RNA sequence: GGGAACGACUCGAGUAGAGUCGAAAAGGGAGAUUGGCGGUGGACGAGCCACUCGCCAACCGGGUCAGGUCCGGAAGGAAGCAGCCCUAACGAGGUCCGGAUCGGGUCGCUCGUCAGUCUCCUACUUGUUUUAAAGGGUACCAGUUCGCUGGUACCCGAUCAGUGACUACUUCGGUAGUCACUGAUCAAAAGAAACAACAACAACAAC
Reactivity to 2A3 in 0.01 (KOAc 150mM, MgCl2 10mM, bicine 150mM(pH8.5), 24C), signal-to-noise 1, nucleotides 027 to 156: g010g000g000a020g010a000u020u010g000g000c030g000g020u020g020g000a030c020g010a000g040c000c030a060c020u000c000g070c040c070a030a030c050c060g000g010g000u080c000a020g000g040u000c010c010g110g100a050a060g030g000a050a000g000c020a000g000c000c000c000u020a020a000c000g010a000g020g040u190c180c120g050g000a020u040c020g000g020g200u010c010g020c030u170c050g020u010c050a000g000u000c000u010c010c000u000a010c020u020u040g010u000u010u020u070a100a090a060g000g000g010u010a000c000c000a000g020u030u060c160g040c100u000g000g000u000a000c010c000c000